[RMDB]
RNA sequence: GGGAACGACUCGAGUAGAGUCGAAAAGAGUGUCGGCGAGGACGUUUCGUUGCUUCCAGCUCCGGGGCCUACGGGGCGCGGCCCGACCCAGAAACUACUAUGGGCCGUGGAACCCCUGGAUGGGUGCCGGCUAGGUAAACUUCGGUUUACCUAGCCGAAAAGAAACAACAACAACAAC
Reactivity to DMS in 0.01 (KOAc 150mM, MgCl2 10mM, bicine 150mM(pH8.5), 24C), signal-to-noise 1, nucleotides 027 to 126: g000a060g030u010g000u020c080g000g020c000g000a120g000g020a080c160g050u010u050u020c190g100u000u010g000c040u000u030c040c060a080g000c190u020c000c010g000g000g000g000c040c000u030a140c240g000g000g000g000c080g000c000g000g000c000c000c010g020a090c040c010c090a170g000a130a050a150c100u060a030c170u030a100u050g000g000g080c000c010g000u000g020g030a160a090c000c000c050c000u000g040g000a080u010g000g030g030u000g000c070
Reactivity to 2A3 in 0.01 (KOAc 150mM, MgCl2 10mM, bicine 150mM(pH8.5), 24C), signal-to-noise 1, nucleotides 027 to 126: g030a010g030u140g020u060c000g000g040c020g020a040g020g130a040c010g000u010u020u030c010g010u000u010g000c030u070u010c000c000a100g060c060u010c000c020g000g000g060g060c020c020u070a100c130g000g000g000g060c000g010c010g000g010c000c020c000g030a090c040c000c010a080g130a070a140a040c110u130a010c000u010a110u210g000g010g000c000c000g000u010g000g000a100a060c000c000c000c000u020g090g020a080u040g010g000g030u000g000c020